[RMDB]
RNA sequence: GGGAACGACUCGAGUAGAGUCGAAAAGAUUUAAACAGAUGGAGAUUCACAAAUGUUUGAAUCCCAGUAACAAAAAUCCUGGUAUCUCGGGUAUACAGUAGUGCAGAUACUGUAUUUUUAAUGCUCCUUAGGUUUUCCAUCUUCGGAUGGAAAACAACUUCAGAUUCUAGUUCGCUAGAAUCUGAAGAAAAGAAACAACAACAACAAC
Reactivity to 2A3 in 0.01 (KOAc 150mM, MgCl2 10mM, bicine 150mM(pH8.5), 24C), signal-to-noise 2, nucleotides 027 to 156: g000a000u000u040u050a050a050a000c010a010g030a050u010g030g020a180g060a120u180u130c070a060c050a120a140a110u070g060u050u110u000g010a010a010u000c000c000c000a020g030u080a060a050c060a080a200a030a000a020u070c020c000u030g030g040u050a070u050c080u050c050g000g080g000u040a030u010a020c010a000g020u020a000g010u000g230c070a040g100a150u000a020c010u000g020u000a020u000u070u010u030u160a130a230u070g000c000u090c040c050u060u070a100g020g090u010u010u000u000c000c000a000u030c030u010u060c230g070g000a000u020g000g000a000a000a000a000c000a000a000
Chemical mapping of a 207-nucleotide RNA with 2A3. The RNA was probed in 150 mM KOAc, 10 mM MgCl2 and 150 mM bicine (pH 8.5) at 24 C. The 2A3 profile rests on 926 reads. 2A3 adducts were read by reverse transcription with SuperScript II with manganese.